[RMDB]
RNA sequence: GGGAACGACUCGAGUAGAGUCGAAAAUUUUGAACAUGUGACGGAUAACUUUGUUGGCAAUAGUUAUGAUUUAAACAUUACACCUCAACAAAUGGCAGAAAUGGUUGAUAUUGUGUCCCACGAAACGGAUUCGCUUAUUAGCAAAGAAGAAAUCAACCGACUAUGACAUGUUCGCAUGUCAUAGUCGAAAAGAAACAACAACAACAAC
Reactivity to DMS in 0.01 (KOAc 150mM, MgCl2 10mM, bicine 150mM(pH8.5), 24C), signal-to-noise 2, nucleotides 027 to 156: u010u000u020u020g010a100a100c050a070u010g040u000g030a070c050g010g010a110u010a060a000c060u010u020u010g070u010u010g010g000c110a060a110u000a150g010u000u010a080u000g020a210u010u000u000a090a040a110c050a090u010u010a050c050a010c020c010u000c020a080a090c020a030a030a030u010g080g000c040a100g010a070a060a190u010g000g000u000u000g010a080u000a060u000u000g000u000g020u020c010c010c060a110c020g020a110a070a190c020g010g000a160u010u000c050g050c050u010u000a160u000u000a120g020c000a020a060a090g030a090a110g010a050a040a080u010c010a080a100c020
Reactivity to 2A3 in 0.01 (KOAc 150mM, MgCl2 10mM, bicine 150mM(pH8.5), 24C), signal-to-noise 2, nucleotides 027 to 156: u100u070u000u090g010a000a000c020a040u080g010u050g080a050c070g000g050a020u050a100a030c010u000u010u040g010u040u080g050g000c070a110a090u010a180g020u050u040a030u010g100a070u000u110u190a080a020a000c000a000u000u020a060c010a040c020c050u080c000a000a020c000a010a060a080u120g010g000c000a000g010a070a070a000u070g040g010u000u000g050a010u010a120u170u090g020u020g000u010c010c030c000a000c030g020a030a050a000c050g020g000a060u050u170c000g000c020u080u100a080u140u070a140g030c010a070a000a000g050a020a000g010a000a090a010u070c020a000a060c000